The record gives the reactivity of an RNA of 177 nucleotides to DMS.

RNA sequence: GGGAACGACUCGAGUAGAGUCGAAAAUGGACUCAAAAGGAGUAUAUUGUAAUCCCAGUACUUUGGGAGGCUGAGUUGGGAGGGUCGCUUGAGCCCAGGAGUUCAAAACCAGCCUAAGCAACAUAGCCCCCAUAGGUAGUUUCGACUACCUAUGGGGAAAAGAAACAACAACAACAAC
Reactivity to DMS in 0.01 (KOAc 150mM, MgCl2 10mM, bicine 150mM(pH8.5), 24C), signal-to-noise 2, nucleotides 027 to 126: u000g030g000a040c000u010c000a100a010a140a150g040g000a070g010u000a050u000a070u010u010g000u010a110a190u010c000c000c000a140g020u000a070c090u000u010u000g010g000g040a020g010g010c040u010g000a120g000u000u000g010g000g000a200g000g010g020u000c050g000c120u000u010g010a080g020c040c010c070a120g000g010a140g030u000u000c080a030a100a060a080c080c040a070g010c000c000u000a020a250g000c030a060a040c050a130u010a100g000c080
The DMS profile rests on 1,553 reads. The RNA was probed in 150 mM KOAc, 10 mM MgCl2 and 150 mM bicine (pH 8.5) at 24 C.